[RMDB]
RNA sequence: GGGAACGACUCGAGUAGAGUCGAAAAUUGGACCCCCUCUUCCUUGGUCUUCACUCCUGGCCUAGUCUGUGUCCUUGCGGAGGCUGGCUUUGCUGUUUGAGGUUUUGGUCCUUUAGGACAGGGGACUGACCACGUUACAAUUCGUUGUAACGUGGUCAAAAGAAACAACAACAACAAC
Reactivity to DMS in 0.01 (KOAc 150mM, MgCl2 10mM, bicine 150mM(pH8.5), 24C), signal-to-noise 1, nucleotides 027 to 126: u030u000g000g040a150c050c010c060c020c030u020c060u000u000c000c000u000u030g010g000u000c000u000u010c090a120c060u000c000c100u000g000g040c040c010u010a060g000u000c070u010g000u000g000u000c010c100u010u020g040c140g010g030a050g000g020c040u010g010g000c020u000u000u000g000c020u010g000u020u000u010g010a090g000g020u000u000u000u040g040g000u010c000c000u000u030u010a040g020g000a060c200a090g000g010g010g010a060c090u020
Reactivity to 2A3 in 0.01 (KOAc 150mM, MgCl2 10mM, bicine 150mM(pH8.5), 24C), signal-to-noise 4, nucleotides 027 to 126: u070u090g060g060a050c010c000c000c010c000u030c030u040u030c000c010u010u050g050g020u050c000u060u080c090a060c040u030c000c010u040g000g010c010c010u030a040g020u010c040u030g070u010g060u070c030c000u060u130g060c130g000g030a020g000g030c040u020g040g000c000u060u060u050g030c050u030g030u100u130u140g050a030g030g070u010u020u040u080g010g010u030c000c000u000u060u040a040g000g000a020c020a030g050g000g000g020a000c010u020